[RMDB]
RNA sequence: GGGAACGACUCGAGUAGAGUCGAAAAGUCUAAAAGCAGGUAAGCCACUGACUAACGCACAUUGUGCGUGUGACAGAUCCACUGUGCGUGUGACAGCGGCUAACCUGGUUUUGGGAAAACCUCUGAAAAGUAUUGCAGGAUUCGUCCUGCAAUACUUAAAAGAAACAACAACAACAAC
Reactivity to DMS in 0.01 (KOAc 150mM, MgCl2 10mM, bicine 150mM(pH8.5), 24C), signal-to-noise 3, nucleotides 027 to 126: g000u010c000u000a000a010a020a020g020c000a010g000g000u000a100a040g000c000c000a040c010u020g000a080c050u000a300a000c000g010c010a020c000a040u030u020g030u000g000c270g010u000g010u020g040a150c290a120g010a070u030c100c010a010c020u000g010u000g000c000g010u000g000u000g010a080c010a000g000c110g030g010c000u000a020a010c000c000u000g010g000u000u000u000u000g000g000g000a060a070a110a110c000c010u000c060u000g000a060a070
Reactivity to 2A3 in 0.01 (KOAc 150mM, MgCl2 10mM, bicine 150mM(pH8.5), 24C), signal-to-noise 5, nucleotides 027 to 126: g030u010c000u020a000a000a010a020g130c000a000g000g020u030a030a010g010c000c000a020c000u010g030a040c010u080a150a000c010g040c010a000c010a050u120u160g020u030g080c180g080u080g040u080g070a070c030a110g110a110u050c010c000a010c000u000g000u000g000c000g010u010g020u020g020a030c000a000g010c010g000g010c000u010a010a020c000c010u010g000g010u000u000u000u000g010g000g010a010a060a030a040c010c000u000c030u040g050a110a130
The record gives the reactivity of an RNA of 177 nucleotides to DMS and 2A3. DMS adducts were read by reverse transcription with MarathonRT. The RNA was probed in 150 mM KOAc, 10 mM MgCl2 and 150 mM bicine (pH 8.5) at 24 C.